[RMDB]
RNA sequence: GGGAACGACUCGAGUAGAGUCGAAAAAGCCGCGCAUACGUGCGCGGCAAUGUGUGUAGUACUUGGCGGCAUCAGUUUUUCUUAGUCCUUUCUGAUGUCCGCCCACGUCGAGUUACGACUCGACGAAUAAACUAUGGGAUUUCGAUCCCAUAGUUUAAAAAGAAACAACAACAACAAC
Reactivity to DMS in 0.01 (KOAc 150mM, MgCl2 10mM, bicine 150mM(pH8.5), 24C), signal-to-noise 5, nucleotides 027 to 126: a070g010c010c000g020c000g040c000a050u020a100c200g010u010g020c000g050c000g000g040c010a010a010u010g010u000g010u000g000u000a070g010u010a070c110u010u000g010g000c010g000g000c010a010u000c010a010g000u010u000u000u010u000c070u030u020a120g000u000c030c020u000u010u010c000u000g000a020u000g000u030c000c010g010c010c010c190a040c020g010u000c000g010a030g010u000u010a120c220g020a090c010u000c000g010a010c000g000a080a060
Reactivity to 2A3 in 0.01 (KOAc 150mM, MgCl2 10mM, bicine 150mM(pH8.5), 24C), signal-to-noise 3, nucleotides 027 to 126: a000g040c030c000g030c010g000c020a020u040a070c220g080u030g020c000g040c000g000g060c010a010a010u020g030u000g010u020g040u050a080g040u010a120c080u120u090g000g000c000g000g000c010a010u010c000a030g020u020u020u020u070u060c060u070u180a140g060u150c040c050u070u140u030c010u000g000a000u000g060u080c000c010g010c000c000c010a030c000g020u000c000g000a010g010u020u070a090c290g040a010c120u000c010g000a000c000g000a010a040
Conditions: 150 mM KOAc, 10 mM MgCl2 and 150 mM bicine (pH 8.5), 24 C. Structure probing data (DMS and 2A3) for a 177-nucleotide construct. Values cover nucleotides 27 to 126. DMS (dimethyl sulfate) methylates the pairing face of unpaired adenines and cytosines. For 2A3 the reverse transcriptase was SuperScript II with manganese. It was measured as part of the RMDB libraries RFM100 and RFMREP.